[RMDB]
RNA sequence: GGGAACGACUCGAGUAGAGUCGAAAAUAGAAGUCGCGAUAAAUGGGCGCCGGCGGAGCGGAGGGAGAUCCGAGCGGCGGCGGCAAGCUGGGUGCGAGCGGCUGAGCAGCACUCCAAGCUCGAACAAACACAUCAUAAACUUCGGUUUAUGAUGUGUAAAAGAAACAACAACAACAAC
Reactivity to DMS in 0.01 (KOAc 150mM, MgCl2 10mM, bicine 150mM(pH8.5), 24C), signal-to-noise 3, nucleotides 027 to 126: u010a100g020a170a100g030u000c020g000c030g010a150u010a050a090a110u010g020g000g000c030g020c020c020g000g000c010g000g000a140g030c020g000g000a040g000g010g010a120g000a130u000c020c010g010a100g020c000g000g000c000g000g000c020g000g020c040a050a020g000c010u000g000g000g010u000g000c010g010a110g040c010g000g010c120u000g000a110g010c050a160g000c010a100c020u010c010c030a050a080g000c010u000c040g000a070a080c190a090a090
Reactivity to 2A3 in 0.01 (KOAc 150mM, MgCl2 10mM, bicine 150mM(pH8.5), 24C), signal-to-noise 2, nucleotides 027 to 126: u150a030g060a110a000g040u030c010g010c050g060a050u120a130a190a070u140g070g030g000c030g020c010c010g040g070c030g050g000a120g050c050g010g050a040g050g070g030a160g030a100u000c010c000g000a050g090c020g120g020c000g000g020c000g020g020c040a020a000g000c010u020g000g030g020u020g020c010g020a130g020c020g090g000c040u000g020a050g000c030a000g020c000a000c010u030c020c020a060a010g000c010u040c040g040a050a000c010a050a140
Source information
Structure probing data (DMS and 2A3) for a 177-nucleotide construct. For DMS, 2,649 sequencing reads were counted. 2A3 adducts were read by reverse transcription with SuperScript II with manganese. High 2A3 reactivity points to a flexible backbone, as in loops and unpaired stretches.